[RMDB]
RNA sequence: GGGAACGACUCGAGUAGAGUCGAAAAGAUCGAGGUCUGCCCACUUCCUCAUAUAUCCUAUACACGGCAGACUUCGAAAGGCGUGAGAAUGAGGAAGUGGUGGAUAUGUGGGUUCUCAUGCCUCACACUACACGGUUCUAUUCGUAGAAUCGUGUAGAAAAGAAACAACAACAACAAC
Reactivity to 2A3 in 0.01 (KOAc 150mM, MgCl2 10mM, bicine 150mM(pH8.5), 24C), signal-to-noise 9, nucleotides 027 to 126: g140a050u060c010g000a000g010g000u000c010u010g000c010c010c030a060c040u020u010c010c010u030c050a010u080a010u020a040u190c030c070u140a100u040a270c120a030c140g010g000c000a000g000a010c000u000u000c000g000a060a010a000g010g000c010g000u010g000a010g010a030a080u100g000a010g030g020a030a020g000u040g010g080u240g000g030a110u070a080u250g050u180g010g010g000u050u010c010u000c000a010u020g000c000c000u020c010a050c000a010
Reactivity to DMS in 0.01 (KOAc 150mM, MgCl2 10mM, bicine 150mM(pH8.5), 24C), signal-to-noise 9, nucleotides 027 to 126: g010a120u000c010g000a020g010g010u000c010u000g010c010c010c160a100c110u000u000c010c010u000c030a130u010a110u010a090u000c090c080u000a100u000a130c170a130c200g010g000c000a020g000a020c010u000u000c010g000a010a080a030g000g010c020g030u010g000a030g010a050a070u010g000a050g000g010a040a050g010u010g010g010u010g010g000a100u000a070u000g010u000g010g000g010u000u000c020u000c010a010u000g000c010c000u000c140a070c220a150

The record gives the reactivity of an RNA of 177 nucleotides to 2A3 and DMS. It was measured as part of the RMDB library OK2TRN.